[RMDB]
RNA sequence: GGGAACGACUCGAGUAGAGUCGAAAAGGACCCCACUCCUGCGAGACAGGAGUAAUCCUAAACAGGGUUUUCACCCUUCCUUUAGUUUCCUUCCUCUCCUGGAGAGGUCUUCUGCCCUAGCCCGGUCGACUAACGAAAUGUUCGCAUUUCGUUAGUCAAAAGAAACAACAACAACAAC
Reactivity to DMS in 0.01 (KOAc 150mM, MgCl2 10mM, bicine 150mM(pH8.5), 24C), signal-to-noise 2, nucleotides 027 to 126: g000g010a040c020c010c040c220a110c010u000c010c000u000g000c150g000a040g010a080c180a000g010g000a020g000u000a020a020u000c140c010u010a020a030a030c200a010g000g000g010u000u020u030u000c200a110c020c010c000u000u010c020c010u000u000u000a040g000u000u000u000c000c000u010u000c040c020u000c010u010c010c020u000g000g010a030g000a100g000g000u000c020u000u000c040u010g010c020c000c010u010a070g000c020c020c030g020g000u010c160
Reactivity to 2A3 in 0.01 (KOAc 150mM, MgCl2 10mM, bicine 150mM(pH8.5), 24C), signal-to-noise 2, nucleotides 027 to 126: g020g010a000c030c000c030c030a100c000u000c010c000u020g000c140g090a060g020a090c190a100g010g020a000g000u000a010a030u010c010c020u040a050a020a020c300a180g050g030g000u080u050u240u300c100a040c000c010c000u010u000c000c000u010u010u010a020g010u040u000u020c000c000u030u060c010c010u010c000u020c000c030u030g020g010a040g000a000g000g000u010c000u040u020c030u080g040c000c000c000u030a070g030c010c000c020g090g110u090c090
Overview
This 177-nucleotide RNA was probed chemically with DMS and 2A3. The data come from the RNA Mapping Database (RMDB), library VIROID. 2A3 adducts were read by reverse transcription with SuperScript II with manganese. For DMS the reverse transcriptase was MarathonRT. For DMS, 2,761 sequencing reads were counted. Conditions: 150 mM KOAc, 10 mM MgCl2 and 150 mM bicine (pH 8.5), 24 C.